RNA sequence: GGGAACGACUCGAGUAGAGUCGAAAAUUGCCGAUUAGGCUGUGUUGUGGCGGGGGCGAAACAGGAUCGACAAGGGUGUAAAGAUCGCUCUUUUACUCGGCAUGAUACCACCGUUAUCGGGUCAACAAAAAGAAUAUGUGGUUCGCCACAUAUUCAAGAUUGCGUUUUACUUCGGUAAAACGCAAUCAAAAGAAACAACAACAACAAC
Reactivity to DMS in 0.01 (KOAc 150mM, MgCl2 10mM, bicine 150mM(pH8.5), 24C), signal-to-noise 1, nucleotides 027 to 156: u000u030g020c010c010g030a140u020u010a100g010g000c000u010g060u000g030u020u010g000u020g020g050c030g000g010g100g040g050c020g020a080a050a130c060a180g040g020a120u000c010g000a180c050a090a050g010g000g020u000g020u000a050a130a150g000a100u000c010g020c060u000c000u010u000u000u000a050c030u010c000g000g000c010a070u010g010a070u000a090c010c110a010c000c000g040u000u000a060u010c080g000g010g010u030c040a140a210c200a060a090a050a140a130g010a070a010u000a000u020g000u000g000g010u000u040c300g010c040c010a010c000a010u000a000u000u010c010a060a120
Reactivity to 2A3 in 0.01 (KOAc 150mM, MgCl2 10mM, bicine 150mM(pH8.5), 24C), signal-to-noise 2, nucleotides 027 to 156: u050u070g030c040c000g070a090u070u110a050g010g010c020u020g000u010g000u050u010g050u030g000g050c010g020g000g030g000g000c040g020a040a000a000c050a010g030g020a060u090c060g020a040c040a050a070g030g060g010u010g030u110a050a120a040g030a040u120c050g000c000u030c000u000u080u000u020a090c060u070c020g010g020c000a000u070g000a000u020a020c010c000a000c010c000g120u100u040a050u060c010g000g000g050u040c010a010a050c050a010a090a020a010a000g020a000a010u000a000u000g000u010g020g040u040u020c070g050c040c000a010c000a000u000a000u000u010c000a010a000

Chemical mapping of a 207-nucleotide RNA with DMS and 2A3. Conditions: 150 mM KOAc, 10 mM MgCl2 and 150 mM bicine (pH 8.5), 24 C. The data come from the RNA Mapping Database (RMDB), library M2RFPK. For 2A3 the reverse transcriptase was SuperScript II with manganese. For 2A3, 1,387 sequencing reads were counted.